[RMDB]
RNA sequence: GGGAACGACUCGAGUAGAGUCGAAAAGUUCCCUCUUAGCGUGGAGGUUUAACUACGCUCGUUCCCCAUAUCGGUGUGGGCGCACCGGAUUUAUAAAUCAAAGUCCUUUAGGGAACGGAAGGGAACAAAAAUCCAUGGGAGUUCGCUCCCAUGGAAAUCGACAAGAUAGGUUCGCCUAUCUUGUCGAAAAAGAAACAACAACAACAAC
Reactivity to 2A3 in 0.01 (KOAc 150mM, MgCl2 10mM, bicine 150mM(pH8.5), 24C), signal-to-noise 2, nucleotides 027 to 156: g000u010u010c000c000c000u000c020u010u100a000g020c010g000u010g020g050a150g020g090u140u180u060a060a040c010u000a000c010g010c010u000c010g000u000u000c080c000c010c000a060u120a030u100c000g000g000u010g000u020g000g000g000c010g010c010a000c000c010g000g000a010u010u260u020a230u110a050a030a000u080c190a040a010a000g000u000c000c000u000u030u060a010g000g000g000a010a000c020g010g020a020a040g010g000g000a000a010c040a030a130a010a000a010u000c000c000a010u000g000g000g000a010g010u050u070c100g060c110u000c000c000c010a000u000g000g000a000a000a010
Reactivity to DMS in 0.01 (KOAc 150mM, MgCl2 10mM, bicine 150mM(pH8.5), 24C), signal-to-noise 2, nucleotides 027 to 156: g000u000u000c000c000c000u000c040u000u000a060g000c020g030u010g000g000a120g050g010u010u000u000a140a170c000u000a010c010g030c020u010c000g000u000u000c020c000c010c070a270u000a070u010c000g050g050u000g030u000g020g010g030c130g040c030a040c020c020g010g010a220u000u000u000a150u020a070a070a070u010c090a030a070a050g020u000c020c010u010u000u000a070g000g000g010a020a060c080g020g010a060a020g000g020g030a050a020c020a020a070a020a090a120u010c000c010a020u000g010g020g010a030g010u000u000c300g000c010u000c000c010c000a020u000g000g000a000a020a020